RNA sequence: GGGAACGACUCGAGUAGAGUCGAAAAGCGGUACACUUCGGUGUACCGCAAAACCGGAAUAAACAUCGGCCCAUGAGCCGAAACGGAAGGGCGUCCGCCCAAAAACGACGCCGUUCGCGGCGUCGAACCGACAUAUGUUGUUCGCAACAUAUGUCGGAAAAGAAACAACAACAACAAC
Reactivity to DMS in 0.01 (KOAc 150mM, MgCl2 10mM, bicine 150mM(pH8.5), 24C), signal-to-noise 1, nucleotides 027 to 126: g010c000g000g000u000a000c010a000c000u000u020c220g000g050u030g000u000a000c000c010g000c000a000a030a040a130c000c010g010g020a210a120u030a120a080a200c300a190u000c010g010g040c000c020c250a120u060g000a180g000c000c000g000a000a050a040c090g020g000a100a020g000g000g000c010g020u010c130c020g010c000c050c010a020a060a060a060a100c020g000a050c000g040c000c000g030u000u000c190g010c030g010g000c000g030u000c000g000a040a050
Reactivity to 2A3 in 0.01 (KOAc 150mM, MgCl2 10mM, bicine 150mM(pH8.5), 24C), signal-to-noise 2, nucleotides 027 to 126: g000c000g000g030u000a000c020a000c020u040u060c120g100g000u000g000u020a000c000c000g000c010a000a000a000a000c000c000g060g140a130a140u180a100a100a060c050a120u010c000g000g050c040c040c060a210u170g000a040g000c000c000g030a030a030a000c020g010g070a000a190g040g000g010c070g070u050c050c110g020c010c000c030a050a080a000a000a010c000g010a000c000g000c000c000g010u010u020c170g030c020g040g000c000g000u000c000g000a010a010
An RNA of 177 nucleotides, treated with DMS and 2A3 and read out base by base. For DMS the reverse transcriptase was MarathonRT. For 2A3 the reverse transcriptase was SuperScript II with manganese. For 2A3, 1,759 sequencing reads were counted. The reactions ran in a buffer of 150 mM KOAc, 10 mM MgCl2 and 150 mM bicine (pH 8.5), at 24 C.